[RMDB]
RNA sequence: GGGAACGACUCGAGUAGAGUCGAAAAUUCGGGGUUAGUAGCUUUACCAUCUGCUUGAGCAGGCGGAACGAUAUCAAUAUCUAACGCUCGAUCAUCAGUAUAAACAUGUCCUUUACGUCCGCCAACAUGUUACGUAUGUCUUCGGACAUACGUAACAAAAAGAAACAACAACAACAAC
Reactivity to 2A3 in 0.01 (KOAc 150mM, MgCl2 10mM, bicine 150mM(pH8.5), 24C), signal-to-noise 6, nucleotides 027 to 126: u060u030c030g000g000g000g010u010u010a020g020u050a030g060c060u070u070u120a150c020c010a070u030c010u040g040c030u140u190g050a070g060c050a030g040g000c000g010g020a060a080c050g020a020u020a030u210c080a100a080u050a040u240c010u030a040a010c060g040c130u020c020g050a030u010c010a020u020c020a030g130u110a100u100a160a090a020c080a050u090g040u060c010c020u040u080u090a020c020g030u010c010c000g020c020c030a040a050c060a110
Reactivity to DMS in 0.01 (KOAc 150mM, MgCl2 10mM, bicine 150mM(pH8.5), 24C), signal-to-noise 3, nucleotides 027 to 126: u010u010c000g030g010g000g000u000u000a040g030u000a050g010c070u000u000u030a110c060c000a110u010c000u000g030c060u050u020g020a100g010c090a060g030g010c070g000g000a050a040c130g010a060u030a100u040c100a100a090u020a070u010c010u010a060a080c010g010c000u000c000g000a010u000c050a080u050c090a080g020u020a130u020a110a070a080c120a040u020g000u000c020c020u000u020u000a070c070g000u000c000c030g000c070c050a050a150c250a130

Notes
An RNA of 177 nucleotides, treated with 2A3 and DMS and read out base by base. The RNA was probed in 150 mM KOAc, 10 mM MgCl2 and 150 mM bicine (pH 8.5) at 24 C. It was measured as part of the RMDB library OK1LIB.